[RMDB]
RNA sequence: GGGAACGACUCGAGUAGAGUCGAAAACUGGUCUUGCCAGCCUCUAUAAGAAGCCAAGCGAGGGCAACAAUCACCGCCAACAGCAGUAGCUUCAUGACGGAUCAUCAGAUGGUUGGCGGCUAAGUGGCCUACUCCGUGCUUUCGAGCACGGAGUAGGAAAAGAAACAACAACAACAAC
Reactivity to 2A3 in 0.01 (KOAc 150mM, MgCl2 10mM, bicine 150mM(pH8.5), 24C), signal-to-noise 3, nucleotides 027 to 126: c010u000g030g010u030c070u090u240g000c000c010a000g000c020c000u010c000u010a120u020a240a000g020a020a000g000c030c000a070a020g010c030g020a220g050g020g040c010a040a050c070a070a160u230c090a010c120c100g000c000c000a080a110c000a160g060c010a010g040u130a020g000c000u040u020c000a020u080g100a050c090g020g070a050u090c030a020u030c040a040g040a050u090g020g020u000u000g000g000c010g000g000c000u020a110a000g020u050g090g010
Reactivity to DMS in 0.01 (KOAc 150mM, MgCl2 10mM, bicine 150mM(pH8.5), 24C), signal-to-noise 2, nucleotides 027 to 126: c030u000g020g010u000c010u050u040g030c000c000a020g040c000c010u000c020u000a080u040a100a230g040a090a000g010c000c050a240a110g000c040g000a290g000g020g000c000a150a060c100a090a180u030c210a110c300c140g000c000c000a030a040c000a300g000c000a170g000u030a160g000c010u000u010c000a130u000g030a180c240g030g000a190u010c130a030u020c040a070g000a030u040g000g000u000u000g000g010c020g000g000c000u010a040a130g000u000g040g000
Structure probing data (2A3 and DMS) for a 177-nucleotide construct. The DMS profile rests on 1,710 reads. For DMS the reverse transcriptase was MarathonRT. It was measured as part of the RMDB library OK1LIB.